[RMDB]
RNA sequence: GGGAACGACUCGAGUAGAGUCGAAAAUAUUCUUUGCUAAAUGUGAUAAUAAUGUGAUCCGCUAACAUAAAAAAAGUUUGACUUCACAAAAGCAGCUGGAAAUGGACAACCACAAUAUGCAUAAAUCGAUUAUUGGAUACUUCGGUAUCCAAUAAUCAAAAGAAACAACAACAACAAC
Reactivity to DMS in 0.01 (KOAc 150mM, MgCl2 10mM, bicine 150mM(pH8.5), 24C), signal-to-noise 3, nucleotides 027 to 126: u000a170u010u000c020u020u000u030g000c040u000a080a160a130u030g020u010g000a020u010a060a050u020a080a080u040g000u010g000a050u000c070c060g010c110u030a070a080c120a110u030a000a000a060a080a110a080a110g000u000u050u000g020a140c120u000u020c110a030c120a010a050a060a050g010c040a030g000c090u000g000g000a050a090a090u000g020g000a070c090a080a090c070c040a060c080a000a100u020a070u020g020c030a040u000a020a040a090u050c160
Reactivity to 2A3 in 0.01 (KOAc 150mM, MgCl2 10mM, bicine 150mM(pH8.5), 24C), signal-to-noise 5, nucleotides 027 to 126: u170a040u050u020c030u060u050u040g020c010u030a080a040a080u050g030u030g060a080u040a200a050u070a120a070u140g030u020g060a110u010c000c010g010c040u060a080a020c030a120u230a080a140a020a010a000a000a030g050u040u080u040g050a070c020u040u010c050a020c010a080a120a010a040g040c010a010g020c040u060g030g010a040a090a110u070g020g020a020c020a050a020c030c030a020c010a040a070u120a060u180g040c040a020u060a120a070a020u170c080